An RNA of 177 nucleotides, treated with DMS and 2A3 and read out base by base. 2A3 adducts were read by reverse transcription with SuperScript II with manganese.

RNA sequence: GGGAACGACUCGAGUAGAGUCGAAAAGGCUAGUGGCCAGUCCUUCCGGCGUAAUAAUUUGCGGUUCAUCUUCGGCAUUCACCCGCAGGGUACAGAGCGUUAAUGCCAGCAGUAAGGCAACAGGCGCAAAGAGAAUACGGUUCGCCGUAUUCUCUUUAAAAGAAACAACAACAACAAC
Reactivity to DMS in 0.01 (KOAc 150mM, MgCl2 10mM, bicine 150mM(pH8.5), 24C), signal-to-noise 8, nucleotides 027 to 126: g000g010c030u010a090g030u010g010g020c030c020a080g010u010c020c010u000u010c040c020g010g010c050g030u020a060a070u020a070a090u020u020u010g010c050g000g010u010u010c070a060u010c050u010u000c050g010g000c040a070u010u010c100a110c080c020c040g020c090a080g000g000g030u000a070c110a070g000a120g010c020g020u000u010a100a140u010g000c010c010a090g010c090a080g010u020a080a090g000g010c040a040a040c120a160g000g000c030g000c060
Reactivity to 2A3 in 0.01 (KOAc 150mM, MgCl2 10mM, bicine 150mM(pH8.5), 24C), signal-to-noise 5, nucleotides 027 to 126: g050g000c030u050a010g030u050g110g020c020c020a020g030u060c010c000u040u030c010c010g040g020c030g070u050a050a090u100a120a140u140u070u090g040c050g010g020u020u080c030a060u010c060u050u040c010g010g000c020a070u060u070c020a070c010c010c010g020c040a060g040g020g000u060a060c020a050g060a020g020c000g010u020u100a080a000u070g010c020c010a010g000c010a020g060u230a200a040g030g000c010a030a020c020a070g030g010c010g000c040

It was measured as part of the RMDB libraries RFM100 and RFMREP. High 2A3 reactivity points to a flexible backbone, as in loops and unpaired stretches.